[RMDB]
RNA sequence: GGGAACGACUCGAGUAGAGUCGAAAAAGUCCGGCCUUCUCACAGGCUGGGCGACACACUCAAACUGCGGGAAACCCCUAAAGCCUUCACUACCAAGCUUGUGUUUCGAAAGGACAUGGUGGCCAGGUUAAUUGCCUCGGGUACGGUCACAACGUGAGUUUGUGGUUAACUUCGGUUAACCACAAACAAAAGAAACAACAACAACAAC
Reactivity to 2A3 in 0.01 (KOAc 150mM, MgCl2 10mM, bicine 150mM(pH8.5), 24C), signal-to-noise 2, nucleotides 027 to 156: a000g030u000c000c030g000g010c010c000u250u080c210u110c150a080c030a040g000g000c000u000g010g000g000c020g030a000c000a000c000a000c000u040c010a080a180a110c050u120g030c070g030g010g020a050a020a060c010c020c000c050u120a110a090a030g040c020c030u030u060c030a000c040u140a030c000c040a060a000g010c040u030u110g010u020g030u040u030u050c020g090a170a040a060g020g010a000c020a030u090g120g000u010g030g000c000c000a010g000g000u010u010a000a050u130u270g010c020c060u040c130g000g020g020u060a110c100g000g030u020c000a010c030a170a090c050g020u020g010a060